[RMDB]
RNA sequence: GGGAACGACUCGAGUAGAGUCGAAAAACAUGUUCGCAUGUCCGUGGUCCUAAGUCAGUGUGACGUCUUGGAGUGCGAUAAGAGUCGGAAACGACUCUUUUGACGCACUAUGAAGAGACGUACACACUGAUAUGGAAAUAGCUGGAUUCGUCCAGAAGUAAUUAUUGGUCUUCGGACCAAUAAUUACAAAAGAAACAACAACAACAAC
Reactivity to 2A3 in 0.01 (KOAc 150mM, MgCl2 10mM, bicine 150mM(pH8.5), 24C), signal-to-noise 6, nucleotides 027 to 156: a010c020a020u070g010u110u120c240g010c120a000u010g030u030c030c060g170u170g100g050u060c000c010u080a190a060g020u010c010a000g000u000g000u000g000a000c010g000u020c000u010u020g010g040a010g000u000g000c000g000a010u030a020a000g000a000g000u010c020g020g040a090a090a060c020g000a000c000u000c000u000u010u000u030g050a040c010g030c000a010c000u050a300u180g040a020a020g010a000g010a020c000g010u230a040c000a000c000a000c000u000g000a000u000a010u040g010g040a010a020a120u150a060g060c000u000g000g010a030u070u030c160g050u030c050c000a000g020a100a030
Reactivity to DMS in 0.01 (KOAc 150mM, MgCl2 10mM, bicine 150mM(pH8.5), 24C), signal-to-noise 2, nucleotides 027 to 156: a030c020a100u020g010u000u010c140g070c030a060u000g010u000c020c060g040u000g010g000u020c000c000u000a110a200g030u000c010a010g050u010g030u000g010a070c000g020u010c010u000u020g030g010a040g020u010g010c000g020a110u010a030a020g010a020g010u000c000g000g010a120a120a270c010g010a010c000u000c010u000u000u000u000g030a300c130g010c010a020c000u000a090u000g000a180a300g000a030g020a020c010g020u000a100c020a020c000a020c000u000g010a000u010a160u020g000g010a070a070a110u000a090g020c000u010g000g000a210u000u010c180g010u000c000c020a120g000a050a220
An RNA of 207 nucleotides, treated with 2A3 and DMS and read out base by base. As a SHAPE reagent, 2A3 marks flexible, mostly unpaired nucleotides at the ribose 2'-OH. The 2A3 profile rests on 6,515 reads. The data come from the RNA Mapping Database (RMDB), library RNAMAK.